[RMDB]
RNA sequence: GGGAACGACUCGAGUAGAGUCGAAAAGAUAUGGAUGUUCAAGCGCGCGAAGAACUCGGAAACGAGGGAGCGUGACUUGAGACAUCCUAAGUCAAAAGCAUCAUGGGGGUUCGCCCCCAUGAUGCAACACCUGAUGAUACUUCGGUAUCAUCAGGUGAAAAGAAACAACAACAACAAC
Reactivity to DMS in 0.01 (KOAc 150mM, MgCl2 10mM, bicine 150mM(pH8.5), 24C), signal-to-noise 3, nucleotides 027 to 126: g000a050u010a300u010g010g000a000u000g000u000u010c000a000a030g010c010g010c010g030c020g010a060a140g000a150a160c000u000c010g010g000a140a080a200c010g000a010g020g000g000a060g000c000g010u000g000a080c000u000u000g000a030g010a020c000a010u000c000c000u010a030a070g020u010c040a110a110a150a130g000c000a000u000c000a010u010g000g000g030g000g010u000u010c260g020c000c000c000c010c000a000u010g000a000u000g010c000a040a080
Reactivity to 2A3 in 0.01 (KOAc 150mM, MgCl2 10mM, bicine 150mM(pH8.5), 24C), signal-to-noise 2, nucleotides 027 to 126: g030a010u090a060u180g010g000a000u000g000u040u040c000a010a010g030c020g000c030g010c040g220a300a040g010a070a070c000u000c010g010g020a090a060a070c000g000a010g000g020g000a030g000c000g000u000g220a300c000u020u010g010a030g040a020c000a010u000c000c000u000a110a010g040u030c020a010a080a060a130g000c000a010u010c000a010u000g040g000g000g000g010u060u060c130g140c000c020c000c010c000a010u000g010a000u000g010c010a000a000

Structure probing data (DMS and 2A3) for a 177-nucleotide construct. The RNA was probed in 150 mM KOAc, 10 mM MgCl2 and 150 mM bicine (pH 8.5) at 24 C. For 2A3, 3,823 sequencing reads were counted.